[RMDB]
The record gives the reactivity of an RNA of 177 nucleotides to 2A3 and DMS. Values cover nucleotides 27 to 126. The 2A3 profile rests on 1,988 reads. Source: RMDB library OK2TRN, as collected in RNAgym. For DMS, 5,256 sequencing reads were counted.
RNA sequence: GGGAACGACUCGAGUAGAGUCGAAAAGCCACGGGAUCGCUCGGCAAGUGGGGCGCAGCUGCAGCUGCAGCCGGCGCGGCCGUCGCUGCCGCUGUCGGCGUCGGCGUCGCCAAGAGCGUCAAGAGCGUAUACCAAGGGAGUUCGCUCCCUUGGUAUAAAAAGAAACAACAACAACAAC
Reactivity to 2A3 in 0.01 (KOAc 150mM, MgCl2 10mM, bicine 150mM(pH8.5), 24C), signal-to-noise 2, nucleotides 027 to 126: g020c000c000a030c060g090g040g020a110u100c010g000c020u000c010g080g000c020a080a120g120u050g060g040g030g000c000g020c010a000g000c000u060g010c040a040g020c000u010g040c010a010g010c000c000g000g000c270g000c020g120g070c010c010g080u060c150g010c020u020g020c000c040g020c080u130g090u180c060g000g000c010g040u050c060g020g020c010g020u070c030g040c020c000a050a020g020a020g070c030g030u020c010a080a020g030a000g020c050g010
Reactivity to DMS in 0.01 (KOAc 150mM, MgCl2 10mM, bicine 150mM(pH8.5), 24C), signal-to-noise 4, nucleotides 027 to 126: g000c010c010a100c120g010g010g000a100u000c020g020c000u000c000g000g000c060a080a130g020u000g000g000g010g000c010g020c000a160g020c020u000g000c040a080g010c030u000g010c010a030g020c020c020g010g010c010g020c210g010g000c020c020g020u010c160g000c030u000g000c000c090g000c020u000g010u010c050g000g000c000g000u010c150g010g010c000g000u000c030g000c010c010a090a120g010a190g000c020g000u010c050a090a100g000a070g020c030g000